[RMDB]
RNA sequence: GGGAACGACUCGAGUAGAGUCGAAAACCCGUUCAUUUCGAUGAACGGGAGUCGGUAACCCUAGGACCAGUAGUGGGACCCGUAGUGGCCGUGGGACCAGUAAAGAGUUAACAUUCGUGUUAACUAAGGAUUAACAUAUAUUCGUAUAUGUUAAUCCAAAAGAAACAACAACAACAAC
Reactivity to 2A3 in 0.01 (KOAc 150mM, MgCl2 10mM, bicine 150mM(pH8.5), 24C), signal-to-noise 9, nucleotides 027 to 126: c010c000c000g000u000u010c000a020u020u040u140c220g140a020u010g000a000a000c000g010g010g000a010g060u050c030g030g030u060a140a200c010c010c000u030a060g020g060a080c010c020a040g050u100a030g100u220g040g050g060a120c010c010c010g040u060a050g060u070g060g000c030c020g010u060g020g010g030a070c010c010a010g030u100a030a150a040g160a010g020u000u010a000a000c010a020u030u110c190g060u050g000u030u010a010a010c020u020a060a070
Reactivity to DMS in 0.01 (KOAc 150mM, MgCl2 10mM, bicine 150mM(pH8.5), 24C), signal-to-noise 9, nucleotides 027 to 126: c010c000c010g020u000u000c000a010u000u000u020c170g030a020u000g010a020a010c000g010g000g000a030g010u000c030g010g000u000a100a160c030c010c020u000a110g010g010a180c040c030a060g010u010a080g020u000g000g000g000a100c050c010c030g020u010a060g020u000g000g010c030c020g010u000g000g010g000a150c030c030a090g010u010a060a100a110g010a030g010u000u000a000a010c000a050u000u010c200g020u000g010u000u000a000a010c000u010a060a110
This 177-nucleotide RNA was probed chemically with 2A3 and DMS. Reactivities are given for positions 27 through 126.